[RMDB]
Structure probing data (2A3 and DMS) for a 177-nucleotide construct. For DMS the reverse transcriptase was MarathonRT. The 2A3 profile rests on 2,333 reads.
RNA sequence: GGGAACGACUCGAGUAGAGUCGAAAACAACGGGGCUAGCUGCCGGGUGUUCCACCUACGGGAACGGUGCCGAGUGAGGCUUAUCCCGGGGGGUAGCGCUCCGUGCCCUUCCAUAGCACUGGGGUCCGAUAGGAUCCGUGUUCGCACGGAUCCUAUCAAAAGAAACAACAACAACAAC
Reactivity to 2A3 in 0.01 (KOAc 150mM, MgCl2 10mM, bicine 150mM(pH8.5), 24C), signal-to-noise 1, nucleotides 027 to 126: c040a020a000c000g000g010g010g000c020u040a070g020c010u050g050c020c000g030g060g040u120g030u110u000c020c030a040c020c030u090a110c060g010g000g020a090a040c080g090g100u120g010c000c010g020a080g120u190g070a090g020g000c000u030u040a170u060c000c000c000g010g000g000g020g000g010u020a010g000c020g000c040u030c020c000g010u000g000c000c000c000u030u060c060c000a090u090a060g060c040a030c110u040g020g020g000g060u000c040c030
Reactivity to DMS in 0.01 (KOAc 150mM, MgCl2 10mM, bicine 150mM(pH8.5), 24C), signal-to-noise 2, nucleotides 027 to 126: c150a190a050c020g010g000g000g000c000u000a080g020c030u000g000c010c000g020g030g050u010g000u000u000c060c010a120c070c120u000a120c080g000g000g000a010a040c190g000g010u020g010c020c010g030a140g040u020g000a130g040g020c020u000u000a110u010c020c000c000g010g000g010g010g000g020u000a000g020c050g000c030u000c000c010g000u000g010c010c000c000u000u000c080c020a100u010a110g000c020a050c090u000g010g000g010g000u000c090c100